[RMDB]
RNA sequence: GGGAACGACUCGAGUAGAGUCGAAAAGAUAUGGAUCCUAUCGAUGAUGACCCAUAGGGUUUGUCGGAAACGAUUAUCCUAUGGCAAGUCGUUAGGAUCCUAAGUCAAACCGGUCUUCGGACCGGAAUCGACUUUAGUUGUUCGCAACUAAAGUCGAAAAAGAAACAACAACAACAAC
Reactivity to DMS in 0.01 (KOAc 150mM, MgCl2 10mM, bicine 150mM(pH8.5), 24C), signal-to-noise 2, nucleotides 027 to 126: g000a000u000a250u020g000g000a020u000c000c000u000a010u000c000g000a000u010g010a070u000g000a090c300c020c000a010u000a000g000g010g030u000u030u010g020u000c030g010g000a060a020a100c010g030a020u000u010a020u000c000c000u000a000u010g000g000c000a020a050g000u000c000g010u000u000a000g000g000a000u000c000c000u000a010a070g040u000c040a120a160a120c000c000g000g000u000c010u000u000c240g050g020a010c010c000g000g000a010a040
Reactivity to 2A3 in 0.01 (KOAc 150mM, MgCl2 10mM, bicine 150mM(pH8.5), 24C), signal-to-noise 1, nucleotides 027 to 126: g030a000u040a030u100g000g000a010u000c020c010u000a000u040c010g020a010u040g020a080u040g020a030c020c010c020a020u010a010g100g000g000u160u290u300g060u050c020g000g020a030a020a040c000g010a010u000u080a070u190c010c000u000a000u000g000g000c000a120a060g000u000c000g010u000u000a000g000g010a010u000c000c000u000a030a000g010u000c030a000a010a110c010c000g000g030u020c010u040u120c300g150g010a020c000c030g000g000a000a090

Chemical mapping of a 177-nucleotide RNA with DMS and 2A3. 2A3 adducts were read by reverse transcription with SuperScript II with manganese. For DMS the reverse transcriptase was MarathonRT.